Structure probing data (DMS and 2A3) for a 207-nucleotide construct. 2A3 adducts were read by reverse transcription with SuperScript II with manganese. For 2A3, 35,048 sequencing reads were counted. The DMS profile rests on 40,816 reads. The RNA was probed in 150 mM KOAc, 10 mM MgCl2 and 150 mM bicine (pH 8.5) at 24 C.
[RMDB]
RNA sequence: GGGAACGACUCGAGUAGAGUCGAAAAGUAUGUUACGAUUAUGUGACUAGCCAUAAUCGAUGAAGGUACUCGACUUCAUCGUAACAUAGAAUUGUCAGUGCGUACUGGCUAGUCACAGUACGGCAGACUACACUCCUACUCUGCCACUGAGUAGGAGUGAGUGCUAAUUAUUCGUAAUUAGCACUCAAAAAGAAACAACAACAACAAC
Reactivity to DMS in 0.01 (KOAc 150mM, MgCl2 10mM, bicine 150mM(pH8.5), 24C), signal-to-noise 8, nucleotides 027 to 156: g020u000a030u000g020u000u000a050c030g010a130u000u000a100u000g020u000g000a030c010u000a030g020c080c020a080u000a110a160u000c030g000a060u000g000a040a020g010g010u000a140c190u000c120g000a120c010u010u000c020a030u000c020g020u000a050a030c030a060u000a110g010a100a180u010u010g020u000c040a210g020u000g020c050g020u000a080c170u000g010g020c000u000a010g020u000c010a030c010a020g010u000a040c040g010g020c030a100g000a090c030u000a120c050a090c000u000c000c000u000a010c010u000c000u010g020c120c170a080c130u000g000a030g010u000a010g000g010a020g020
Reactivity to 2A3 in 0.01 (KOAc 150mM, MgCl2 10mM, bicine 150mM(pH8.5), 24C), signal-to-noise 9, nucleotides 027 to 156: g030u030a020u090g020u040u150a050c040g020a170u100u060a060u160g000u000g000a000c000u000a000g000c000c010a090u130a110a080u110c010g000a000u010g010a010a000g040g020u090a070c050u040c080g100a040c010u010u000c000a000u000c010g010u020a030a010c020a050u120a060g200a180a140u160u130g070u130c070a060g120u070g220c070g040u070a040c050u020g000g000c000u000a000g000u010c010a000c000a000g000u010a020c010g010g020c010a010g010a030c010u050a030c060a010c020u000c000c000u000a000c000u010c010u040g180c070c040a090c120u050g000a000g000u000a000g000g010a000g000